An RNA of 177 nucleotides, treated with 2A3 and DMS and read out base by base. For DMS the reverse transcriptase was MarathonRT. Source: RMDB library OK1LIB, as collected in RNAgym. For DMS, 918 sequencing reads were counted. For 2A3, 1,684 sequencing reads were counted. Reactivities are given for positions 27 through 126.
[RMDB]
RNA sequence: GGGAACGACUCGAGUAGAGUCGAAAACACUUCUCGGAUCGGGUAUGGGCACUUUGGGAUAUAUGGGAACGAGAUAAAGGACUCCUACUACAAACAUGUUCCGAUGACGGGACUAGGGGUUGACGUGGAUCCUCACCUAGUUCGCUAGGUGAGGAUCAAAAGAAACAACAACAACAAC
Reactivity to 2A3 in 0.01 (KOAc 150mM, MgCl2 10mM, bicine 150mM(pH8.5), 24C), signal-to-noise 4, nucleotides 027 to 126: c040a020c110u070u070c000u020c000g070g030a140u080c040g020g000g020u200a130u110g060g060g020c150a070c210u160u280u140g020g010g040a070u180a040u050a060u210g030g000g030a140a000c100g000a040g030a070u080a050a050a010g050g010a000c000u000c010c000u020a050c020u070a060c140a080a160a000c040a110u090g010u020u000c020c020g030a150u170g060a050c060g000g020g000a010c000u020a020g000g010g010g000u000u010g020a010c020g000u020g050
Reactivity to DMS in 0.01 (KOAc 150mM, MgCl2 10mM, bicine 150mM(pH8.5), 24C), signal-to-noise 1, nucleotides 027 to 126: c180a270c230u000u000c000u000c050g000g000a070u000c050g020g000g000u000a070u020g000g000g000c120a150c040u000u040u000g000g000g000a130u020a080u000a060u010g010g000g010a080a160c080g000a000g000a050u000a000a000a080g000g000a000c070u000c000c000u000a060c290u000a040c160a000a210a010c170a170u050g010u000u030c000c000g000a210u000g000a300c140g060g000g000a000c000u000a010g000g020g000g000u000u000g070a230c170g060u030g000